[RMDB]
RNA sequence: GGGAACGACUCGAGUAGAGUCGAAAAACAGAACCAGCUGCUACGGCAGCUGGUACUGAACUUUCAUGGAGUUAAGAAACCACGUAAACAAAGCGGAACCGAAAAGCUAAACGAGUAGGAAGAAUAAAUAGGUACCACCACUUCGGUGGUGGUACAAGCUAGCUAAUAUCUUCGGAUAUUAGCUAGCAAAAGAAACAACAACAACAAC
Reactivity to 2A3 in 0.01 (KOAc 150mM, MgCl2 10mM, bicine 150mM(pH8.5), 24C), signal-to-noise 4, nucleotides 027 to 156: a000c010a000g010a000a010c000c000a000g010c010u010g010c010u040a040c180g160g000c000a010g020c000u000g000g000u000a000c000u000g000a040a050c020u060u140u140c080a100u100g070g030a060g080u070u110a130a050g080a110a070a020c030c010a030c070g050u140a090a100a090c080a120a130a000g010c000g030g010a040a110c010c000g020a010a010a010a000g030c080u200a160a040a000c010g010a000g010u010a010g090g050a050a010g040a040a080u230a100a070a070u210a060g150g000u000a000c010c000a000c000c000a010c010u050u050c220g060g000u000g000g000u000g000g000u000a000c000a000a000
Reactivity to DMS in 0.01 (KOAc 150mM, MgCl2 10mM, bicine 150mM(pH8.5), 24C), signal-to-noise 1, nucleotides 027 to 156: a090c040a080g000a100a070c000c000a000g020c030u010g000c000u020a130c300g140g010c000a030g040c000u000g070g030u000a000c000u000g000a150a000c020u000u000u000c030a130u000g000g000a210g100u000u010a090a150g020a220a080a090c000c000a020c000g010u010a090a110a120c120a040a120a050g010c040g050g000a130a210c100c050g000a090a140a110a110g000c020u020a040a100a090c040g000a080g000u000a170g010g000a060a060g020a100a050u030a110a070a110u000a150g030g010u000a010c000c000a020c000c000a010c000u000u000c300g060g020u000g040g030u010g000g000u000a000c000a010a090

Chemical mapping of a 207-nucleotide RNA with 2A3 and DMS. For 2A3 the reverse transcriptase was SuperScript II with manganese. For 2A3, 2,996 sequencing reads were counted. DMS adducts were read by reverse transcription with MarathonRT. Reactivities are given for positions 27 through 156.